[RMDB]
Record summary: The record gives the reactivity of an RNA of 177 nucleotides to DMS and 2A3. The reactions ran in a buffer of 150 mM KOAc, 10 mM MgCl2 and 150 mM bicine (pH 8.5), at 24 C. The DMS profile rests on 3,709 reads. For 2A3, 5,710 sequencing reads were counted. For 2A3 the reverse transcriptase was SuperScript II with manganese.

RNA sequence: GGGAACGACUCGAGUAGAGUCGAAAAAGAACUAGCGAUUGUAAAAGGCUGUUUGCGCUAAGAUAUGGAAUUAGCGCAAAUAGGUCCGAAUUCCAUGAUAACAUUUCGGACAACCGCGCUAAAACAAGAUCGGUAGAAUAUUCGUAUUCUACCGAUCAAAAGAAACAACAACAACAAC
Reactivity to DMS in 0.01 (KOAc 150mM, MgCl2 10mM, bicine 150mM(pH8.5), 24C), signal-to-noise 4, nucleotides 027 to 126: a100g000a160a120c100u000a030g020c000g020a080u000u010g000u010a040a090a170a070g000g010c010u000g000u000u000u000g000c010g010c000u000a010a010g010a170u000a210u010g010g000a080a160u000u000a010g020c010g000c010a010a010a010u000a020g020g000u000c000c000g000a020a020u000u010c120c120a070u010g010a100u010a070a100c160a110u000u000u000c010g010g000a010c010a040a040c040c050g010c030g000c110u020a030a070a060a060c180a080a060
Reactivity to 2A3 in 0.01 (KOAc 150mM, MgCl2 10mM, bicine 150mM(pH8.5), 24C), signal-to-noise 4, nucleotides 027 to 126: a010g050a030a010c010u010a000g020c000g060a060u020u300g060u230a020a040a080a050g060g010c000u000g010u010u020u000g000c000g010c000u020a010a010g050a150u180a150u300g100g030a050a140u020u000a000g000c000g000c000a010a000a000u000a000g000g010u000c000c000g000a000a010u110u010c080c040a070u180g040a020u120a120a050c060a100u040u000u030c000g000g000a000c000a020a020c050c030g040c000g000c020u040a080a090a020a090c050a090a020